[RMDB]
RNA sequence: GGGAACGACUCGAGUAGAGUCGAAAACACGACGCAUUCGGAGGCCAGCAGCAGGCCUCUACGUAACAAGCGACGUAACAAGACUAGCCGAGCUAGCGCGGUCGUCUGCGCCUUAGCAGACGUGGCAGAGAGAGCCAGCGCAGGUGACAGAGCGGCAUAAAGGGGUCUAAUUCGUUAGACCCCUUUAAAAAGAAACAACAACAACAAC
Reactivity to DMS in 0.01 (KOAc 150mM, MgCl2 10mM, bicine 150mM(pH8.5), 24C), signal-to-noise 1, nucleotides 027 to 156: c040a110c020g010a060c030g030c010a300u000u000c020g010g040a040g060g020c000c020a080g080c040a120g080c100a240g010g050c020c000u010c000u010a000c050g000u010a060a150c130a130a110g010c050g000a020c000g030u000a110a190c080a090a130g000a100c030u000a210g020c000c060g000a110g010c000u000a110g020c030g000c000g010g040u010c010g010u000c020u000g000c000g040c060c100u000u000a170g040c090a030g020a000c070g060u000g040g050c020a000g000a140g020a250g000a080g000c040c010a060g030c060g010c030a150g010g000u000g000a070c010a060g010a090g000c000g020g030c020a220
The record gives the reactivity of an RNA of 207 nucleotides to DMS. DMS adducts were read by reverse transcription with MarathonRT.